[RMDB]
The record gives the reactivity of an RNA of 177 nucleotides to DMS and 2A3. It was measured as part of the RMDB library RFM100. For 2A3, 556 sequencing reads were counted.
RNA sequence: GGGAACGACUCGAGUAGAGUCGAAAAUUGAUCCAAGGAUUUCCGAAUGGGACUUCCUGUUUAACACUCCGAAAGGAGAGGGAACCCCGGGAAUUGAAACAUCUUAGUACCGGGAGGAAGAGAAAUCGUGCUGGUUUGUAUUCGUACAAACCAGCACAAAAGAAACAACAACAACAAC
Reactivity to DMS in 0.01 (KOAc 150mM, MgCl2 10mM, bicine 150mM(pH8.5), 24C), signal-to-noise 2, nucleotides 027 to 126: u030u040g000a090u050c040c040a150a000g040g010a040u000u000u000c000c010g000a140a090u050g000g020g020a050c080u000u000c000c010u000g030u000u000u020a070a140c090a160c000u000c000c000g000a070a110a190g000g000a010g020a020g000g000g040a140a200c300c010c000c000g010g010g000a060a150u000u000g000a020a200a110c120a100u000c040u000u010a020g000u000a090c000c030g000g020g010a110g000g020a010a070g010a160g040a090a060a020u040c080
Reactivity to 2A3 in 0.01 (KOAc 150mM, MgCl2 10mM, bicine 150mM(pH8.5), 24C), signal-to-noise 1, nucleotides 027 to 126: u040u080g030a020u000c000c000a040a030g080g000a060u010u020u000c020c020g150a300a110u250g020g010g060a080c020u000u000c000c000u000g020u010u010u020a090a020c120a020c000u010c030c030g070a030a000a040g000g000a030g000a040g030g050g000a010a010c000c000c000c000g000g010g000a020a000u000u010g020a060a120a020c070a150u050c020u070u100a020g000u010a000c000c000g000g070g000a050g020g000a000a060g100a010g020a160a010a020u100c100